[RMDB]
RNA sequence: GGGAACGACUCGAGUAGAGUCGAAAAAGCAGGAGUACGCUCCUGCAUGGGUAGACGAAUUGACCCCAACUGAAGUUCAAUUCUAACGUUAAAAGGAGUUUUACAUGACUGGACGUACGCGUCCAGAUGACGAUUUCAUUCUUCGGAAUGAAAUCAAUCGUACUCAAGAGUUCGCUCUUGAGUACGAAAAAGAAACAACAACAACAAC
Reactivity to 2A3 in 0.01 (KOAc 150mM, MgCl2 10mM, bicine 150mM(pH8.5), 24C), signal-to-noise 2, nucleotides 027 to 156: a000g010c000a000g000g050a000g010u060a010c180g030c120u000c000c000u020g020c000a010u020g000g000g030u160a130g070a180c100g000a020a020u020u000g010a000c000c000c010c010a090a070c100u230g050a020a000g040u040u020c000a000a000u000u000c020u040a070a060c150g070u090u190a020a030a010a070g150g010a110g040u030u040u050u120a100c080a070u080g150a120c010u010g000g000a000c010g010u100a040c230g020c010g080u010c000c000a000g000a000u020g060a030c130g000a000u000u000u020c000a000u000u000c000u020u000c070g100g000a000a010u010g000a020a000a000u000c000a000a000
Reactivity to DMS in 0.01 (KOAc 150mM, MgCl2 10mM, bicine 150mM(pH8.5), 24C), signal-to-noise 1, nucleotides 027 to 156: a150g000c000a010g040g060a030g030u030a050c300g040c020u000c010c000u000g010c030a030u010g010g000g020u010a110g020a140c050g010a030a050u000u020g010a050c030c040c010c000a020a270c150u020g010a040a040g000u020u020c080a020a080u010u000c030u010a110a180c120g050u010u010a110a040a140a100g020g010a290g050u000u020u000u000a120c060a150u000g000a140c020u020g000g000a010c020g010u000a030c300g000c050g080u000c000c000a000g000a050u000g000a080c110g020a040u010u010u000c000a030u010u000c000u000u010c300g000g000a040a010u000g000a000a000a020u000c000a040a050